[RMDB]
RNA sequence: GGGAACGACUCGAGUAGAGUCGAAAAGUUCUCCAACUCGCUGGCACCGGCCAUUGUUGCCGCUUCCAUCAAAGUGCUGGAGAUGGUCGAAGCGGGUAGCGAGCUGCGUGACCGUCUGUGGGCGAACGCCUGUACACAGCUUCGGCUGUGUACAGGCAAAAGAAACAACAACAACAAC
Reactivity to DMS in 0.01 (KOAc 150mM, MgCl2 10mM, bicine 150mM(pH8.5), 24C), signal-to-noise 2, nucleotides 027 to 126: g010u000u010c010u000c000c050a050a090c050u000c020g040c030u000g020g000c020a080c140c030g000g000c010c050a160u000u010g000u010u000g030c010c010g000c020u010u000c050c050a040u000c100a070a080a130g040u000g030c010u000g020g010a210g000a060u010g000g020u010c120g010a100a100g030c030g040g030g040u010a050g010c030g010a080g010c040u000g000c080g020u010g000a070c060c010g010u020c040u020g020u010g020g000g000c050g020a050a080c130
Reactivity to 2A3 in 0.01 (KOAc 150mM, MgCl2 10mM, bicine 150mM(pH8.5), 24C), signal-to-noise 1, nucleotides 027 to 126: g000u020u010c030u000c030c030a020a050c000u030c050g010c020u080g040g060c030a030c030c030g040g000c000c010a100u050u090g180u100u090g040c010c010g030c000u020u000c010c030a070u050c020a090a120a070g110u120g110c080u050g030g040a070g020a070u020g000g030u030c040g010a050a040g020c030g050g050g000u010a010g000c020g000a030g020c000u050g010c030g090u070g050a230c040c000g030u090c060u070g090u070g030g050g000c020g010a040a020c100

Chemical mapping of a 177-nucleotide RNA with DMS and 2A3. Conditions: 150 mM KOAc, 10 mM MgCl2 and 150 mM bicine (pH 8.5), 24 C. For 2A3 the reverse transcriptase was SuperScript II with manganese. High DMS reactivity at an A or C suggests that its Watson-Crick edge is free.